[RMDB]
RNA sequence: GGGAACGACUCGAGUAGAGUCGAAAAGGCGCAUGUGGGGGUCAUCGAGGUGCUUGAGGAGAUGGGUAUUCCUGUCGAUAUCGUAACGGGGGUAAGCAUUGGGUCGAUGGUGGGAGCAUAUUACGCGGAUCAUUCAGUAUUUCGAUACUGAAUGAUCAAAAGAAACAACAACAACAAC
Reactivity to 2A3 in 0.01 (KOAc 150mM, MgCl2 10mM, bicine 150mM(pH8.5), 24C), signal-to-noise 3, nucleotides 027 to 126: g000g010c030g000c050a060u070g020u090g070g030g000g000g010u030c010a040u080c060g030a040g010g080u070g030c000u060u090g050a010g040g050a050g030a010u030g010g000g010u070a150u090u130c000c000u010g030u030c040g060a080u050a100u250c060g050u080a090a080c070g000g000g020g010g000u040a050a000g030c020a050u040u100g020g000g000u040c040g040a030u070g010g010u060g020g000g000a020g020c020a010u070a040u150u120a080c100g020c050g080
Reactivity to DMS in 0.01 (KOAc 150mM, MgCl2 10mM, bicine 150mM(pH8.5), 24C), signal-to-noise 4, nucleotides 027 to 126: g030g010c080g010c070a070u000g020u000g010g020g010g010g010u010c080a050u000c080g010a090g010g010u000g020c040u000u000g010a090g000g000a170g000a070u000g000g000g000u000a090u010u000c010c020u000g010u000c030g000a150u010a060u000c090g020u010a090a070c090g000g010g010g000g000u000a060a080g000c070a080u010u000g010g010g000u000c060g010a050u010g000g020u000g010g010g010a060g000c090a040u010a070u000u010a070c190g030c140g000
This 177-nucleotide RNA was probed chemically with 2A3 and DMS. For DMS, 6,181 sequencing reads were counted. For DMS the reverse transcriptase was MarathonRT. The reactions ran in a buffer of 150 mM KOAc, 10 mM MgCl2 and 150 mM bicine (pH 8.5), at 24 C. For 2A3, 4,010 sequencing reads were counted. The data come from the RNA Mapping Database (RMDB), library OK2TST.